[RMDB]
RNA sequence: GGGAACGACUCGAGUAGAGUCGAAAACGGAAGCAUUAAAACCAUUCGAGCUAGUCAAUGCGUGGCGUGUCUCGCCGCAGCGUGUUGGCGAAUGUAAAGAGUGACUAAGCAUGUAGUACCGAGGAUGAUAAGAGCAAUUCGUUCGCGAAUUGCUCAAGAGAGAUGAUAGGUUCGCCUAUCAUCUCUCAAAAGAAACAACAACAACAAC
Reactivity to 2A3 in 0.01 (KOAc 150mM, MgCl2 10mM, bicine 150mM(pH8.5), 24C), signal-to-noise 6, nucleotides 027 to 156: c030g020g010a070a010g010c020a020u050u110a060a040a030a060c060c000a020u050u060c040g030a040g040c030u060a010g020u020c010a010a020u030g010c030g110u240g030g000c030g020u150g100u070c070u060c180g050c020c010g030c030a020g020c010g000u020g000u000u020g010g000c020g010a060a030u080g000u060a030a060a060g040a030g020u030g000a030c030u040a070a000g060c040a040u070g030u090a050g030u030a070c040c040g010a040g080g020a040u100g020a040u090a250a100g000a000g000c000a000a000u010u000c000g030u040u060c120g000c000g110a000a000u000u000g000c000u000c000a000a000
Reactivity to DMS in 0.01 (KOAc 150mM, MgCl2 10mM, bicine 150mM(pH8.5), 24C), signal-to-noise 3, nucleotides 027 to 156: c070g020g000a240a150g030c030a090u000u000a090a090a120a110c060c030a080u000u000c050g000a250g030c040u000a140g020u000c020a020a010u010g000c020g020u020g000g030c030g000u000g040u000c140u000c010g050c250c000g030c010a070g000c040g060u020g000u000u000g010g010c000g000a070a050u010g030u010a070a110a180g000a080g030u000g000a060c020u000a100a080g010c080a100u000g020u010a090g010u000a100c010c020g010a140g020g010a110u000g010a080u000a080a240g020a020g030c000a020a010u000u000c010g010u000u000c300g040c060g010a010a010u000u000g000c000u000c000a010a040